[RMDB]
RNA sequence: GGGAACGACUCGAGUAGAGUCGAAAAAGAUCCACGCUACGGCGUGGAUCACACGUUCAUCCCUAUUGGGACGGAAGUAGGCAUAGUGCCGAAGGAAUGCAUUAGUCAUGCGCUACGGCGCAUGACACACAUCAGAGUCACUUCGGUGACUCUGAAACAAUUUAUGGACGUUCGCGUCCAUAAAUUGAAAAGAAACAACAACAACAAC
Reactivity to DMS in 0.01 (KOAc 150mM, MgCl2 10mM, bicine 150mM(pH8.5), 24C), signal-to-noise 1, nucleotides 027 to 156: a120g010a000u000c000c000a010c010g000c010u000a110c240g070g020c030g090u000g010g000a000u000c000a030c100a020c040g010u010u000c000a070u000c010c000c000u010a110u000u010g000g010g030a020c000g010g000a020a040g010u000a090g000g010c040a190u000a080g040u010g000c000c000g010a060a110g000g020a120a080u030g020c050a160u000u000a060g030u000c000a020u000g010c010g000c010u000a080c300g080g010c000g000c000a000u000g000a000c000a030c080a030c070a100u000c000a060g000a030g000u020c000a000c010u000u040c230g070g060u000g000a010c000u000c000u000g040a000a040a130
Reactivity to 2A3 in 0.01 (KOAc 150mM, MgCl2 10mM, bicine 150mM(pH8.5), 24C), signal-to-noise 3, nucleotides 027 to 156: a000g000a000u010c000c000a000c000g010c000u050a060c300g080g010c000g000u000g010g000a000u000c000a000c000a000c000g040u030u030c020a050u050c030c000c010u090a160u060u200g010g010g000a010c000g040g030a060a030g030u060a030g000g000c030a060u090a270g120u140g160c000c000g010a020a030g070g100a110a050u130g000c060a090u000u300a040g000u000c000a000u020g000c010g000c010u030a050c250g070g000c010g000c010a000u000g000a000c000a000c000a000c000a050u010c000a010g000a000g010u000c000a030c000u040u060c190g090g000u000g000a000c000u030c000u000g010a000a000a000
An RNA of 207 nucleotides, treated with DMS and 2A3 and read out base by base. It was measured as part of the RMDB library M2RFPK. Values cover nucleotides 27 to 156. Conditions: 150 mM KOAc, 10 mM MgCl2 and 150 mM bicine (pH 8.5), 24 C. For DMS the reverse transcriptase was MarathonRT.